This 207-nucleotide RNA was probed chemically with 2A3 and DMS. Reactivities are given for positions 27 through 156. 2A3 adducts were read by reverse transcription with SuperScript II with manganese.

[RMDB]
RNA sequence: GGGAACGACUCGAGUAGAGUCGAAAAGGGGUCUUUGACUCCCCACCGACCAAGAUGAGAGCUUGGAUUUAUGGAGCUGAAGCCUCCACGGCUCCAUUGUCAGCUUUGAGGUCGAGGUCAAAGACGGAGGCACCCAAAACCACACUUCGGUGUGGAAACCUACUAUUAGAUUCGUCUAAUAGUAGGUAAAAGAAACAACAACAACAAC
Reactivity to 2A3 in 0.01 (KOAc 150mM, MgCl2 10mM, bicine 150mM(pH8.5), 24C), signal-to-noise 6, nucleotides 027 to 156: g030g010g010g000u000c010u000u000u000g000a000c010u080c190c050c030c000a020c000c000g000a000c000c010a070a020g110a230u300g070a100g010a030g170c130u300u300g170g000a100u200u300u110a010u030g000g000a000g000c010u020g020a110a000g020c010c000u000c000c010a020c010g010g000c000u010c000c000a000u000u020g010u020c080a050g030c040u040u090u110g040a050g000g000u000c010g000a020g000g010u010c000a010a000a000g010a000c020g000g020a000g000g010c010a020c000c010c000a040a100a030a090c000c010a010c000a000c000u040u120c230g120g000u000g000u000g000g000a080a020
Reactivity to DMS in 0.01 (KOAc 150mM, MgCl2 10mM, bicine 150mM(pH8.5), 24C), signal-to-noise 2, nucleotides 027 to 156: g020g010g040g020u000c030u000u020u020g000a030c010u010c300c030c000c060a300c110c020g000a080c020c000a050a300g030a240u030g000a180g020a080g050c050u000u000g020g010a100u000u010u000a040u010g010g000a040g000c040u000g020a100a100g000c130c020u010c000c030a300c050g000g000c020u000c010c020a020u000u000g010u000c020a120g030c060u000u010u000g010a240g010g010u000c010g000a300g020g000u000c010a040a030a010g010a060c000g050g000a040g120g030c050a060c020c020c010a080a060a150a180c000c000a020c000a030c030u000u000c210g080g010u000g040u020g000g000a000a060

The DMS profile rests on 3,502 reads. The 2A3 profile rests on 8,635 reads.